[RMDB]
RNA sequence: GGGAACGACUCGAGUAGAGUCGAAAAAUGUUUGGAGACAGGUACGGCAACAUGGUUUCUCUGGGCACUCGUGACUGUUCCAUCCAGAGAAGGGCCCAGAAGAUCAUCGAGGAGGGCAACGUCGUGGCGAAUGGUGAACAUUCGUGUUCACCAUUCGAAAAGAAACAACAACAACAAC
Reactivity to DMS in 0.01 (KOAc 150mM, MgCl2 10mM, bicine 150mM(pH8.5), 24C), signal-to-noise 4, nucleotides 027 to 126: a070u010g010u000u000u000g020g010a120g010a070c070a050g010g000u000a060c060g000g000c070a090a120c160a060u010g020g010u000u000u000c170u000c010u000g010g010g010c020a060c010u000c060g020u020g000a050c040u000g010u000u010c080c090a180u010c200c020a050g000a100g000a130a060g010g000g020c020c000c000a010g000a020a040g000a020u000c020a030u000c090g000a130g000g010a070g010g010g020c050a040a050c110g010u000c080g000u000g010g000
Reactivity to 2A3 in 0.01 (KOAc 150mM, MgCl2 10mM, bicine 150mM(pH8.5), 24C), signal-to-noise 2, nucleotides 027 to 126: a000u090g090u050u050u070g070g000a110g000a010c020a040g080g030u120a020c030g050g010c020a000a000c000a060u040g010g000u020u000u000c150u000c000u020g000g000g000c020a020c090u050c030g090u130g110a100c000u020g040u100u230c020c000a020u000c030c000a020g040a010g070a190a040g020g000g010c000c000c000a000g000a010a010g000a030u040c030a030u030c090g020a060g100g020a020g000g040g000c010a030a020c050g050u060c010g010u050g050g020